[RMDB]
RNA sequence: GGGAACGACUCGAGUAGAGUCGAAAAUAAAUGAGCGUACAGCACACUCAGACUGUACGCUAUCUGAGUGUGUCAACUUCAAAGUCCAACGACACACACAAGCCGUUGGAACAAGAGUGUGAGAAAAAGUGUAAUACCCUUUCGAGGGUAUUACACUAAAAGAAACAACAACAACAAC
Reactivity to DMS in 0.01 (KOAc 150mM, MgCl2 10mM, bicine 150mM(pH8.5), 24C), signal-to-noise 3, nucleotides 027 to 126: u000a130a110a060u000g000a100g050c030g010u000a050c050a250g040c040a050c020a030c020u000c030a080g030a060c070u000g020u020a040c210g000c070u000a020u000c030u000g000a050g000u020g020u000g000u000c040a130a070c050u010u030c080a070a060a180g000u000c000c000a020a010c050g010a020c000a080c140a080c270a120c300a070a040g000c050c000g000u020u000g000g010a030a040c030a060a220g000a010g000u000g010u000g000a090g000a060a020a050a050
Reactivity to 2A3 in 0.01 (KOAc 150mM, MgCl2 10mM, bicine 150mM(pH8.5), 24C), signal-to-noise 2, nucleotides 027 to 126: u160a010a080a110u180g050a030g050c070g030u040a010c060a020g030c010a000c000a010c050u010c010a030g040a120c010u070g030u150a040c110g040c060u010a000u010c010u020g030a020g000u040g000u000g050u070c030a000a040c020u080u090c040a100a070a030g030u000c010c000a020a020c010g010a010c010a010c030a010c010a000c040a160a040g000c010c000g020u000u020g040g020a030a000c000a050a000g030a010g000u080g000u030g050a080g100a070a090a030a030